[RMDB]
RNA sequence: GGGAACGACUCGAGUAGAGUCGAAAACUUGUGUCUAACAGCAUUUGUCAAGGCAAAUCCAAAAUCCAAGUGGUCUUCUCAAAAGGCCAAAAGUAGUUUGGUUGAUCUGACUUGUGGCAAAAAUUACAACGCUGAAUCUGUUCGCAGAUUCAGCGUUAAAAGAAACAACAACAACAAC
Reactivity to DMS in 0.01 (KOAc 150mM, MgCl2 10mM, bicine 150mM(pH8.5), 24C), signal-to-noise 1, nucleotides 027 to 126: c050u000u000g000u000g020u010c050u010a030a130c150a130g050c020a070u000u010u000g040u000c000a060a040g000g010c050a020a150a110u000c070c070a100a050a040a040u000c060c020a100a190g030u000g010g040u000c000u000u000c220u000c300a050a030a000a130g010g000c000c000a000a000a040a050g000u030a020g000u010u000u000g000g030u020u000g010a070u030c040u000g000a030c010u000u000g030u000g010g000c040a040a010a030a120a020u000u000a140c210
Source: RMDB library OK2TST, as collected in RNAgym. The record gives the reactivity of an RNA of 177 nucleotides to DMS. The DMS profile rests on 609 reads. DMS adducts were read by reverse transcription with MarathonRT.